Source information
Conditions: 150 mM KOAc, 10 mM MgCl2 and 150 mM bicine (pH 8.5), 24 C. The record gives the reactivity of an RNA of 207 nucleotides to 2A3 and DMS. In probing experiments dimethyl sulfate is read out at A N1 and C N3, which are open when not base-paired. Source: RMDB library M2RFPK, as collected in RNAgym.
RNA sequence: GGGAACGACUCGAGUAGAGUCGAAAAUUGAAAUUGAACCGACCUGUUAUCGAAAGAUAGGCAGAAGAUACGAAAUGUGUGACAGCAUGGGAAGUAAAGGCAGACCGUGGUUCCCUUGAGUAUCUUAAUUAGGGGGACGAGUUCGCUCGUCCCCCAACGUAACGUCAUUCUUCGGAAUGACGUUACGAAAAGAAACAACAACAACAAC
Reactivity to 2A3 in 0.01 (KOAc 150mM, MgCl2 10mM, bicine 150mM(pH8.5), 24C), signal-to-noise 1, nucleotides 027 to 156: u020u090g040a020a030a000u070u050g060a060a080c070c000g020a080c000c060u000g010u030u000a010u070c050g010a030a040a000g000a010u050a030g010g070c000a000g010a130a020g010a000u030a000c000g050a010a010a090u030g130u000g020u090g110a030c010a020g100c000a060u050g000g000g010a080a000g070u030a130a030a070g090g010c040a000g080a100c000c030g030u020g030g120u030u020c020c000c000u000u010g010a010g040u000a030u020c000u010u160a160a120u060u090a130g000g000g000g000g000a000c000g000a000g010u070u140c230g020c060u000c000g000u000c020c000c000c000c000a000a000
Reactivity to DMS in 0.01 (KOAc 150mM, MgCl2 10mM, bicine 150mM(pH8.5), 24C), signal-to-noise 1, nucleotides 027 to 156: u000u010g000a110a100a100u010u020g020a100a110c020c040g050a080c000c000u080g010u000u000a080u000c100g050a090a150a300g010a010u000a020g020g000c020a130g020a010a080g000a070u020a020c050g000a060a050a040u000g010u010g010u020g000a120c150a200g000c020a040u010g010g010g000a030a110g000u000a050a060a120g000g030c000a090g040a240c020c020g010u010g010g020u000u020c010c010c010u000u010g010a160g040u000a020u000c030u020u000a050a150u010u000a210g010g000g030g090g010a010c000g020a030g020u000u000c220g000c010u000c050g000u000c000c020c000c000c010a000a000